[RMDB]
RNA sequence: GGGAACGACUCGAGUAGAGUCGAAAAUUGUGUAGGCUUAAGUGUCGUGGGGGCAGCAUGGGGUAUUUUCAUUACUGGUUCAUCCAUGAUUGGUGCCGGUGUGCGUGCUCCAAGGAUUACCACCAAGGAUAGUGAGUGAGUUCGCUCACUCACUAUCAAAAGAAACAACAACAACAAC
Reactivity to 2A3 in 0.01 (KOAc 150mM, MgCl2 10mM, bicine 150mM(pH8.5), 24C), signal-to-noise 6, nucleotides 027 to 126: u140u110g060u020g030u110a040g030g030c030u090u120a120a050g060u110g020u090c030g030u070g000g000g000g040g000c020a020g000c020a070u040g050g000g000g000u020a050u030u110u060u050c040a030u020u190a050c040u030g020g020u110u160c030a080u060c050c000a030u150g050a160u160u140g040g010u030g020c030c000g040g020u030g020u020g010c070g060u050g000c000u010c010c000a020a000g040g000a000u040u110a050c000c040a030c000c030a040a020g150
Reactivity to DMS in 0.01 (KOAc 150mM, MgCl2 10mM, bicine 150mM(pH8.5), 24C), signal-to-noise 5, nucleotides 027 to 126: u020u020g010u010g020u000a050g010g000c040u010u020a070a080g000u010g010u010c030g040u010g000g020g000g000g030c060a120g000c060a110u000g010g020g000g030u010a010u000u010u030u030c000a020u000u020a040c080u000g000g000u000u050c120a100u050c010c010a070u010g010a160u020u020g010g010u000g000c020c010g000g010u010g020u000g000c250g000u010g030c010u000c010c010a050a080g010g010a080u010u010a090c030c030a110c060c080a070a130g000
About this RNA:
Structure probing data (2A3 and DMS) for a 177-nucleotide construct. Conditions: 150 mM KOAc, 10 mM MgCl2 and 150 mM bicine (pH 8.5), 24 C. For DMS the reverse transcriptase was MarathonRT.